[RMDB]
Description:
An RNA of 207 nucleotides, treated with 2A3 and read out base by base. The 2A3 profile rests on 1,263 reads.
RNA sequence: GGGAACGACUCGAGUAGAGUCGAAAAGCGUACUACUGGUCGGCAGGAGCUUGGAUUUAUGGGUGGGCCCAUCCCAAAUAGGAUGGGUAGCCCAUUGUCAGCUCCUGCGACCAGUAUCGCAAACUGCAGUAGGAAUGUUCGCAUUCCUACUGCAGAACUACUAUGUUCGCUUCGGCGAACAUAGUAGAAAAGAAACAACAACAACAAC
Reactivity to 2A3 in 0.01 (KOAc 150mM, MgCl2 10mM, bicine 150mM(pH8.5), 24C), signal-to-noise 2, nucleotides 027 to 156: g010c000g050u060a060c050u000a020c000u000g010g010u030c080g300g070c000a000g000g020a020g010c040u210u220g250g010a090u290u300u130a020u040g010g010g070u070g030g300g000c010c000c000a000u040c000c030c010a260a300a090u300a090g000g030a000u000g010g030g000u020a020g030c000c000c000a000u000u000g000u000c000a000g000c000u010c000c000u000g000c000g000a000c000c000a000g010u000a000u010c010g000c000a030a000a030c000u010g000c000a000g000u000a000g000g000a000a000u010g040u080u090c210g030c160a000u000u000c000c000u000a000c000u000g010c000a000g000a000a000
Background: As a SHAPE reagent, 2A3 marks flexible, mostly unpaired nucleotides at the ribose 2'-OH. The RNA was probed in 150 mM KOAc, 10 mM MgCl2 and 150 mM bicine (pH 8.5) at 24 C.